[RMDB]
Description
The record gives the reactivity of an RNA of 177 nucleotides to DMS and 2A3. The RNA was probed in 150 mM KOAc, 10 mM MgCl2 and 150 mM bicine (pH 8.5) at 24 C.
RNA sequence: GGGAACGACUCGAGUAGAGUCGAAAAGAUAUGGAGCAUCGCGAGCUUCCUACCCACCUCGGAAACGAGAGGGAAGAACUACUCGCGAUGCUCCUAAGUCAAAGGAGUAAUGUUCGCAUUACUCCAACAUAUGUAGUCGGUUCGCCGACUACAUAUGAAAAGAAACAACAACAACAAC
Reactivity to DMS in 0.01 (KOAc 150mM, MgCl2 10mM, bicine 150mM(pH8.5), 24C), signal-to-noise 8, nucleotides 027 to 126: g010a070u010a300u000g000g000a020g010c000a020u000c000g020c010g000a010g000c070u000u000c020c000u000a150c040c020c040a300c190c000u010c010g000g000a110a080a160c010g000a010g010a240g010g000g000a090a040g010a030a020c060u020a190c000u000c000g030c010g010a000u000g000c000u000c000c000u000a010a050g010u000c080a080a100a140g010g010a010g010u000a000a010u000g010u000u020c180g010c010a010u000u000a010c000u010c000c000a040a080
Reactivity to 2A3 in 0.01 (KOAc 150mM, MgCl2 10mM, bicine 150mM(pH8.5), 24C), signal-to-noise 3, nucleotides 027 to 126: g060a020u170a090u210g010g010a000g010c000a000u000c000g010c010g000a000g000c040u110u010c020c000u120a170c020c040c000a100c060c020u020c020g030g000a100a110a080c010g000a010g030a050g020g080g010a000a000g000a040a040c220u260a050c000u300c010g000c000g000a000u000g000c000u000c000c000u000a010a000g000u000c050a000a000a190g000g000a000g000u000a010a000u040g020u120u170c300g000c130a000u000u000a010c000u000c000c000a000a000
Values cover nucleotides 27 to 126. The data come from the RNA Mapping Database (RMDB), library TTRDEL.